[RMDB]
RNA sequence: GGGAACGACUCGAGUAGAGUCGAAAACACGCGAACGCAAACGGGGCGCCGCGGCGAAUUAUCACGUGGGAGCGAGUCAACACUUCGAGGAGGUAGGAACGUGAACGGGGGGCGGCGGCUUGUUCCAGACUGCGGGUAGUUUCGACUACCCGCAGUCAAAAGAAACAACAACAACAAC
Reactivity to 2A3 in 0.01 (KOAc 150mM, MgCl2 10mM, bicine 150mM(pH8.5), 24C), signal-to-noise 2, nucleotides 027 to 126: c140a010c070g050c020g080a090a000c050g010c010a010a170a000c090g000g000g000g000c020g020c020c000g030c000g150g030c150g020a110a030u190u120a090u180c060a020c060g020u090g090g230g020a020g000c010g000a000g010u040c050a030a040c070a070c200u230u150c090g050a010g090g050a060g120g020u110a010g000g060a130a000c000g040u090g120a120a020c060g000g000g000g000g000g050c000g000g000c000g000g000c080u010u070g010u000u010c000c000a030